[RMDB]
RNA sequence: GGGAACGACUCGAGUAGAGUCGAAAACAGUGUUACUGAGCCUGCUGGGUAAGCUAGUUUCUAUUAGGAACUUGGUAGCAAAACUGCAGAGAACUGGAGCAGUCCUGAACCACAGUGGCUUCCAGUAGCAUAAAUCCGUAUUCGUACGGAUUUAUGCAAAAGAAACAACAACAACAAC
Reactivity to 2A3 in 0.01 (KOAc 150mM, MgCl2 10mM, bicine 150mM(pH8.5), 24C), signal-to-noise 4, nucleotides 027 to 126: c020a020g010u040g040u190u090a030c020u020g010a000g040c000c020u050g030c030u030g030g040g020u080a050a070g050c040u020a010g020u010u060u000c110u090a300u260u220a060g000g030a030a060c020u030u090g100g030u090a030g010c020a030a050a030a070c040u050g000c050a010g030a030g030a300a030c070u090g000g050a060g000c040a000g020u000c000c040u030g030a060a020c030c010a040c010a110g040u060g080g000c000u050u020c040c000a030g000u020a040
Reactivity to DMS in 0.01 (KOAc 150mM, MgCl2 10mM, bicine 150mM(pH8.5), 24C), signal-to-noise 5, nucleotides 027 to 126: c060a090g010u000g020u010u000a030c020u000g010a080g010c020c010u000g030c040u000g000g030g000u010a110a140g020c020u010a050g010u000u000u000c010u010a160u010u010a070g020g000a010a050c010u000u010g030g010u010a100g000c080a080a060a120a150c030u000g010c020a120g000a130g000a080a080c100u000g000g000a130g000c040a060g010u000c030c030u010g010a090a080c070c050a090c070a020g010u010g010g010c010u000u000c100c010a020g020u000a050
The record gives the reactivity of an RNA of 177 nucleotides to 2A3 and DMS. Source: RMDB library OK2TST, as collected in RNAgym. The RNA was probed in 150 mM KOAc, 10 mM MgCl2 and 150 mM bicine (pH 8.5) at 24 C. The 2A3 profile rests on 4,459 reads. The DMS profile rests on 4,836 reads.